Annotation:
Chemical mapping of a 177-nucleotide RNA with DMS and 2A3. Conditions: 150 mM KOAc, 10 mM MgCl2 and 150 mM bicine (pH 8.5), 24 C. The DMS profile rests on 910 reads. Source: RMDB library TTRDES, as collected in RNAgym. Reactivities are given for positions 27 through 126.
RNA sequence: GGGAACGACUCGAGUAGAGUCGAAAAGAUAUGGAUGAAUUCACGGGAGAUCGAGGUUCGGAAACGAACCGAGAUCGAGGAUCGUGACUGUUCAUCCUAAGUCAAAACCUCCUCUUCGGAGGAGGAAUCAUCUGUUUGGGUUCGCCCAAACAGAUGAAAAAGAAACAACAACAACAAC
Reactivity to DMS in 0.01 (KOAc 150mM, MgCl2 10mM, bicine 150mM(pH8.5), 24C), signal-to-noise 2, nucleotides 027 to 126: g020a030u000a300u000g000g000a020u000g010a010a000u000u000c000a030c000g010g020g030a030g050a000u010c020g000a300g000g020u000u000c000g020g020a130a140a210c020g000a010a020c010c000g000a240g000a000u010c000g040a000g030g000a070u010c020g000u000g000a020c300u000g000u020u000c000a020u000c000c000u000a030a120g010u040c050a020a040a150a190c000c000u000c000c010u000c000u000u000c290g010g000a020g010g000a000g000g030a020a100
Reactivity to 2A3 in 0.01 (KOAc 150mM, MgCl2 10mM, bicine 150mM(pH8.5), 24C), signal-to-noise 1, nucleotides 027 to 126: g020a040u010a020u270g000g000a010u010g000a010a060u120u010c020a000c000g040g000g020a080g000a010u000c020g000a000g020g010u000u010c000g020g000a060a130a070c030g000a000a020c000c000g000a020g010a000u000c000g010a010g000g010a010u030c000g040u020g050a010c210u290g160u110u020c010a010u000c020c000u010a120a010g130u050c060a000a030a110a300c020c000u000c010c000u000c000u040u070c300g190g000a000g000g010a010g030g050a000a060